[RMDB]
RNA sequence: GGGAACGACUCGAGUAGAGUCGAAAAGACGGUAUCGAACAAUUGGAUUGUUUAUUAUUCUUGCAGGCGCAUGGGGCUCGGCAUUUAUGGCUAUUAAGGCUGGCUUACCGUAUAUUCCACCAGUCCUCUUUGCAGCAUUACGAUACGAUAUUGCUGGUACCCCAUGUAAAUUCGUUUACAUGGGGUAAAAAGAAACAACAACAACAAC
Reactivity to DMS in 0.01 (KOAc 150mM, MgCl2 10mM, bicine 150mM(pH8.5), 24C), signal-to-noise 4, nucleotides 027 to 156: g000a100c040g010g010u010a160u010c030g030a100a090c060a080a140u000u010g000g020a300u000u000g010u000u000u000a080u010u010a120u000u010c040u000u000g010c040a080g010g040c050g000c040a040u000g000g010g000g020c020u000c050g020g010c030a070u000u010u000a050u010g020g030c030u000a120u010u000a060a090g010g030c030u000g020g020c070u010u000a060c030c010g000u010a110u000a140u000u010c040c050a090c060c020a050g010u000c010c020u010c090u000u010u000g030c000a060g030c030a100u000u000a060c080g010a100u000a060c080g010a140u000a080u000u000g010c010u000g010g010
Reactivity to 2A3 in 0.01 (KOAc 150mM, MgCl2 10mM, bicine 150mM(pH8.5), 24C), signal-to-noise 4, nucleotides 027 to 156: g060a000c030g010g020u060a040u130c060g050a080a040c040a080a090u100u150g060g030a050u030u040g110u070u080u070a090u100u080a090u070u090c050u060u100g030c040a040g070g000c030g010c070a030u100g020g030g010g000c020u030c060g010g000c020a010u060u100u070a090u110g030g000c020u030a040u130u120a110a050g030g000c000u000g000g040c010u010u050a050c000c000g000u040a040u010a020u130u060c030c020a030c010c010a020g060u100c010c020u060c050u050u100u080g040c020a010g000c000a020u030u070a030c050g110a090u040a220c040g060a080u030a050u120u080g010c020u050g060g040

Source information: Structure probing data (DMS and 2A3) for a 207-nucleotide construct. 2A3 adducts were read by reverse transcription with SuperScript II with manganese. The reactions ran in a buffer of 150 mM KOAc, 10 mM MgCl2 and 150 mM bicine (pH 8.5), at 24 C. The 2A3 profile rests on 3,808 reads.